Structure probing data (DMS and 2A3) for a 177-nucleotide construct. The 2A3 profile rests on 3,557 reads. DMS (dimethyl sulfate) methylates the pairing face of unpaired adenines and cytosines. DMS adducts were read by reverse transcription with MarathonRT. The data come from the RNA Mapping Database (RMDB), library OK1LIB. The RNA was probed in 150 mM KOAc, 10 mM MgCl2 and 150 mM bicine (pH 8.5) at 24 C. For 2A3 the reverse transcriptase was SuperScript II with manganese.
[RMDB]
RNA sequence: GGGAACGACUCGAGUAGAGUCGAAAAUCGAAAACAUCUCGACGUACCAUGCAGAUUGGGACACUCCGCUAUACACUCAUCCCUCCAACUGCAGGGACGAUUCCUUUGUCCCGAUUCGACCAGCUCAGACCGAUAGCAAUUUCGAUUGCUAUCGGUCAAAAGAAACAACAACAACAAC
Reactivity to DMS in 0.01 (KOAc 150mM, MgCl2 10mM, bicine 150mM(pH8.5), 24C), signal-to-noise 2, nucleotides 027 to 126: u000c060g010a060a020a060a150c220a050u000c120u000c030g000a070c070g000u000a120c030c050a110u020g000c010a060g000a130u030u000g030g000g000a150c080a140c040u020c140c000g030c030u000a090u050a080c060a050c000u000c000a100u000c000c020c020u020c030c010a000a050c030u000g000c120a040g000g000g000a000c010g010a160u000u000c080c000u000u000u010g040u000c060c000c010g000a140u010u000c100g000a090c060c040a030g040c030u000c060a100
Reactivity to 2A3 in 0.01 (KOAc 150mM, MgCl2 10mM, bicine 150mM(pH8.5), 24C), signal-to-noise 5, nucleotides 027 to 126: u070c010g020a000a000a020a080c040a110u070c010u010c050g040a040c020g020u050a100c000c020a040u040g050c010a000g200a300u080u090g010g040g030a030c010a020c040u030c010c000g000c060u060a040u050a160c090a020c070u100c040a120u050c020c000c000u030c040c020a050a030c020u050g030c040a030g020g000g000a000c010g020a030u060u110c040c000u070u070u110g040u010c010c000c010g020a020u030u070c040g060a020c020c000a010g030c020u000c020a040